[RMDB]
RNA sequence: GGGAACGACUCGAGUAGAGUCGAAAAAGAACAAAGCCGGUGGCAUCACACUGUGUGACUUCAUACUACACUACAAGGCUACAGUGACCAAUACAGCACAGUCCAGGUACAAAAACAGACACGUAGACCAAUAGAACAAGAUAAAGAACCAGAAAUAAUUACUGGGUAGUUUCGACUACCCAGUAAUAAAAGAAACAACAACAACAAC
Reactivity to 2A3 in 0.01 (KOAc 150mM, MgCl2 10mM, bicine 150mM(pH8.5), 24C), signal-to-noise 2, nucleotides 027 to 156: a000g030a060a000c010a000a000a060g020c000c020g040g010u010g030g030c050a090u040c040a080c020a020c050u060g000u010g010u010g060a060c040u010u040c050a030u080a070c030u050a040c090a020c050u170a050c050a140a000g070g000c030u030a010c020a000g010u040g030a020c010c040a020a010u160a100c020a020g020c010a040c000a020g000u010c000c030a000g040g000u040a050c030a010a150a000a010a000c010a000g010a020c070a000c100g000u020a010g010a040c030c000a000a050u040a010g040a010a010c020a090a000g030a060u150a110a050a020g050a020a060c070c010a010g090a000a080a070u210a020
Reactivity to DMS in 0.01 (KOAc 150mM, MgCl2 10mM, bicine 150mM(pH8.5), 24C), signal-to-noise 1, nucleotides 027 to 156: a170g000a100a060c060a030a010a210g010c000c020g030g080u010g000g030c010a090u000c030a090c030a070c010u000g050u000g020u010g010a070c090u000u000c020a080u010a120c030u020a040c140a080c030u040a080c110a060a100g000g010c030u000a030c020a080g010u010g000a100c060c000a050a150u010a100c060a080g010c010a090c020a040g020u000c020c050a060g000g030u020a210c020a020a040a040a050a030c060a080g000a070c040a040c040g000u010a010g010a060c030c070a010a120u000a050g000a030a040c010a030a060g010a130u000a080a020a060g000a040a110c060c000a100g000a040a100a110u000a070